[RMDB]
RNA sequence: GGGAACGACUCGAGUAGAGUCGAAAAUCGUGAGAGUACGUCGAUCGAUCAGGCCCGGCGCGAGCUAUACAGAGUACCGUGGCCCACGAGGCCCUGAUCCACUGGCCAUCAGGCGCUGCGCGCGCAGCGGGGUAUUACUCUUCGGAGUAAUACCCCGAAAAGAAACAACAACAACAAC
Reactivity to DMS in 0.01 (KOAc 150mM, MgCl2 10mM, bicine 150mM(pH8.5), 24C), signal-to-noise 4, nucleotides 027 to 126: u000c010g010u000g000a300g000a060g010u010a100c140g000u010c020g000a170u000c040g020a030u010c060a100g000g010c030c020c020g000g000c010g000c030g000a070g000c030u000a100u010a190c130a090g000a120g030u010a050c080c040g010u000g010g010c000c020c040a080c160g010a210g000g000c060c030c050u000g000a060u000c030c070a090c090u000g000g010c020c030a090u000c100a100g020g010c060g000c100u010g000c030g020c080g000c050g000c050a060g010
Reactivity to 2A3 in 0.01 (KOAc 150mM, MgCl2 10mM, bicine 150mM(pH8.5), 24C), signal-to-noise 4, nucleotides 027 to 126: u040c020g000u020g000a060g010a010g050u300a230c110g210u010c010g020a040u010c020g000a020u040c050a060g060g070c000c020c000g040g000c020g010c020g030a040g010c030u090a050u040a300c060a040g100a040g100u060a070c050c030g080u130g030g010c000c010c020a120c100g020a200g030g010c030c000c020u050g010a100u030c040c010a060c070u040g010g010c020c000a110u130c130a110g070g000c020g010c040u130g030c040g010c000g030c000g000c040a010g120